[RMDB]
RNA sequence: GGGAACGACUCGAGUAGAGUCGAAAAUUUUACUUAAGCCUGUAAAGAAGGCUCAGCUUCAGGUAAGUGAAAUGGUAAUUUUUCAAGUCUAUCCUUACUCCUCUUCAGCAUGUCUUUGAAAUGUGGAUGGAGGGAAAUCACCUGCAGAGUCCAUGAAGUAUAUGGUGCACUUCGGUGCACCAUAUACAAAAGAAACAACAACAACAAC
Reactivity to 2A3 in 0.01 (KOAc 150mM, MgCl2 10mM, bicine 150mM(pH8.5), 24C), signal-to-noise 1, nucleotides 027 to 156: u010u010u010u050a040c000u080u040a070a010g030c030c000u000g080u180a120a070a120g070a020a020g000g000c000u020c060a040g020c000u020u070c010a010g000g000u090a050a100g000u080g040a020a050a110u040g070g090u130a110a140u060u070u060u080u140c080a090a080g000u000c020u140a060u220c010c050u160u020a100c040u040c030c000u010c000u020u040c000a000g030c000a020u070g110u040c060u120u230u060g160a180a110a100u030g040u000g040g000a060u060g060g000a000g030g000g000a000a000a090u110c070a030c040c020u080g010c020a010g040a000g120u000c040c010a080u110g030a090a020